[RMDB]
RNA sequence: GGGAACGACUCGAGUAGAGUCGAAAAGGUGGUGCUUUGUGGUGACCCUAAACAAGUCGGAUGUGUGAACCAGCUCCAGAUGCGGAUGCAUUACAAUCACGAGAUCAGUGACCGCGUUCUGCGGAAGAUUGUCAAACUGGUUCGCCAGUUUGACAAUAAAAGAAACAACAACAACAAC
Reactivity to 2A3 in 0.01 (KOAc 150mM, MgCl2 10mM, bicine 150mM(pH8.5), 24C), signal-to-noise 2, nucleotides 027 to 126: g000g010u030g060g020u060g010c030u040u090u120g060u050g010g020u050g020a070c000c010c020u070a100a060a070c030a000a070g040u000c000g030g060a060u060g070u000g000u020g100a010a060c010c020a020g010c020u020c030c050a010g040a110u170g040c030g060g050a020u130g050c000a010u030u030a050c030a000a110u000c010a010c120g060a110g050a190u110c070a040g030u010g140a050c010c000g000c000g060u160u040c020u150g020c030g080g010a030a000g090
Reactivity to DMS in 0.01 (KOAc 150mM, MgCl2 10mM, bicine 150mM(pH8.5), 24C), signal-to-noise 4, nucleotides 027 to 126: g020g010u000g010g020u010g000c090u000u000u010g040u000g010g020u010g010a090c040c010c020u010a080a130a120c230a100a110g010u000c030g010g010a080u000g020u000g010u000g000a070a110c080c040a110g000c040u000c020c040a110g000a080u000g010c070g010g010a100u000g020c060a080u000u010a080c130a060a090u010c030a050c060g020a130g010a070u020c090a120g020u000g000a120c020c030g000c020g010u020u000c080u010g000c030g000g010a080a070g000